This 177-nucleotide RNA was probed chemically with 2A3.
RNA sequence: GGGAACGACUCGAGUAGAGUCGAAAAGUGACGCAAUUCAAGUAGCCAAGUGCUAUGGGGAGUCUGUGUUAGUUAAUGCUGCUAACACACAUCUUAAGCAUGGCGGUGGUAUCGCUGGUGCUAUUAAAUUCGACCGCUCUUUCGAGAGCGGUCGAAUAAAAGAAACAACAACAACAAC
Reactivity to 2A3 in 0.01 (KOAc 150mM, MgCl2 10mM, bicine 150mM(pH8.5), 24C), signal-to-noise 2, nucleotides 027 to 126: g090u090g010a000c040g000c110a000a130u000u170c090a220a000g000u000a000g000c000c000a300a060g000u060g110c000u000a060u090g000g010g000g000a090g060u070c190u090g000u060g000u000u030a000g060u010u130a180a180u280g240c200u010g010c000u090a000a000c000a020c000a000c040a000u000c020u020u160a010a050g000c000a000u000g040g040c140g020g010u140g060g050u090a090u110c000g000c010u060g010g130u090g000c000u060a090u140u110a250a090